[RMDB]
RNA sequence: GGGAACGACUCGAGUAGAGUCGAAAAUCAAAGAGCGUACAGCACACUCAGACUGUACGACAGUCUGACACACACGUUCGCUAGUCCAACGAGAGAGAGAGAGCGUUGGAACAAGUGUGUGAAAAAAGUCCUAUAGGUUCUUCGGAACCUAUAGGACAAAAGAAACAACAACAACAAC
Reactivity to 2A3 in 0.01 (KOAc 150mM, MgCl2 10mM, bicine 150mM(pH8.5), 24C), signal-to-noise 3, nucleotides 027 to 126: u140c070a060a090a020g130a040g020c030g040u080a030c050a060g000c060a040c000a020c100u060c020a020g050a090c010u020g000u130a140c050g030a010c040a010g070u000c000u030g020a000c000a000c010a000c000a000c020g060u160u120c040g020c130u070a050g050u020c010c000a010a000c020g000a010g000a010g000a010g000a010g000a010g020a190g050c000g000u010u000g010g020a010a020c010a060a080g000u000g000u000g010u000g000a070a010a000a000a000a020
Reactivity to DMS in 0.01 (KOAc 150mM, MgCl2 10mM, bicine 150mM(pH8.5), 24C), signal-to-noise 2, nucleotides 027 to 126: u000c050a050a130a080g000a090g030c030g010u000a050c070a080g000c070a060c130a120c190u000c070a030g000a100c020u000g000u000a060c050g000a010c050a030g000u000c020u000g010a050c040a000c000a020c020a030c000g010u030u000c130g030c110u000a150g000u000c000c000a000a000c030g000a060g000a140g000a080g000a060g010a170g000a230g050c000g000u000u010g020g000a050a050c100a030a090g020u000g010u000g000u020g000a000a030a060a020a040a070
An RNA of 177 nucleotides, treated with 2A3 and DMS and read out base by base.
2A3 is a SHAPE reagent: it acylates the 2'-hydroxyl of flexible nucleotides of all four kinds.
It was measured as part of the RMDB library M2PK90.
The RNA was probed in 150 mM KOAc, 10 mM MgCl2 and 150 mM bicine (pH 8.5) at 24 C.